[RMDB]
Annotation:
Source: RMDB library OK1LIB, as collected in RNAgym. An RNA of 177 nucleotides, treated with 2A3 and DMS and read out base by base. DMS adducts were read by reverse transcription with MarathonRT. The DMS profile rests on 2,755 reads. The reactions ran in a buffer of 150 mM KOAc, 10 mM MgCl2 and 150 mM bicine (pH 8.5), at 24 C. Values cover nucleotides 27 to 126. For 2A3, 2,732 sequencing reads were counted.
RNA sequence: GGGAACGACUCGAGUAGAGUCGAAAAGAUUGGCAGCACGCCGGCCGUGCCUGUCAGCCUGCUGCCGCCGCCGGCGAUGCCAGCACUGAUAAUCAACGGCGUUUGAAGCCGUACCGUCGCGGCACGCCGCUACUCGGACGUUCGCGUCCGAGUAGCGAAAAGAAACAACAACAACAAC
Reactivity to 2A3 in 0.01 (KOAc 150mM, MgCl2 10mM, bicine 150mM(pH8.5), 24C), signal-to-noise 4, nucleotides 027 to 126: g080a100u150u210g030g000c020a020g010c060a020c100g010c010c000g000g000c080c010g030u080g020c010c060u070g010u060c030a010g030c000c030u070g050c010u020g010c000c010g010c000c010g030c020c010g010g000c030g030a050u050g010c000c000a010g000c000a010c020u070g020a070u070a280a130u180c070a070a050c030g000g030c030g040u110u160u300g120a110a000g000c010c010g000u010a010c000c030g050u020c030g000c010g000g000c010a000c030g030c000
Reactivity to DMS in 0.01 (KOAc 150mM, MgCl2 10mM, bicine 150mM(pH8.5), 24C), signal-to-noise 2, nucleotides 027 to 126: g000a150u030u000g040g000c000a010g000c040a050c210g000c050c070g000g000c050c160g160u010g060c100c130u030g060u020c040a080g000c000c080u000g050c000u000g000c100c030g010c060c060g010c050c070g000g000c000g010a080u000g000c000c030a090g000c140a090c050u060g010a090u010a090a050u020c120a160a040c060g010g000c030g040u010u030u040g000a220a180g010c000c000g000u000a030c100c010g010u000c050g010c040g010g000c020a030c020g000c040
For 2A3 the reverse transcriptase was SuperScript II with manganese.